[RMDB]
An RNA of 177 nucleotides, treated with DMS and 2A3 and read out base by base. 2A3 adducts were read by reverse transcription with SuperScript II with manganese. Source: RMDB library RFM100, as collected in RNAgym. Conditions: 150 mM KOAc, 10 mM MgCl2 and 150 mM bicine (pH 8.5), 24 C. The DMS profile rests on 1,357 reads. For DMS the reverse transcriptase was MarathonRT. In probing experiments dimethyl sulfate is read out at A N1 and C N3, which are open when not base-paired.
RNA sequence: GGGAACGACUCGAGUAGAGUCGAAAAUUUGUUGGAUUCGUUACUCUCCACCGUCGCCGCCAUGUACAAUUCUCAAACUCUGACUUCUUGGAGGCAAUUCUUCCAAUUUGUUCCAACAUCACAAAACCCAUUGCUGUUGGUUCGCCAACAGCAAUGGAAAAGAAACAACAACAACAAC
Reactivity to DMS in 0.01 (KOAc 150mM, MgCl2 10mM, bicine 150mM(pH8.5), 24C), signal-to-noise 1, nucleotides 027 to 126: u010u030u000g000u000u010g000g000a100u000u000c040g020u000u010a080c100u000c030u000c030c000a070c040c040g000u000c000g000c040c020g030c010c040a060u000g000u000a060c150a060a030u050u000c080u010c080a040a100a040c140u060c130u000g000a070c070u000u010c100u000u000g000g000a060g010g020c300a080a020u000u000c010u000u000c000c000a010a060u070u020u000g000u000u000c000c040a060a060c160a080u000c170a090c080a020a020a050a150c100
Reactivity to 2A3 in 0.01 (KOAc 150mM, MgCl2 10mM, bicine 150mM(pH8.5), 24C), signal-to-noise 4, nucleotides 027 to 126: u010u020u060g020u010u010g020g070a130u040u010c050g020u030u060a080c010u010c000u000c020c010a060c050c010g060u070c020g010c020c030g000c010c000a030u110g010u040a060c060a060a150u150u020c020u010c010a080a110a070c030u040c050u080g080a070c020u050u010c010u070u020g010g010a030g000g040c020a030a080u140u030c000u050u010c000c000a040a080u020u030u110g080u030u000c010c000a030a060c020a060u120c060a040c040a050a130a030a050c000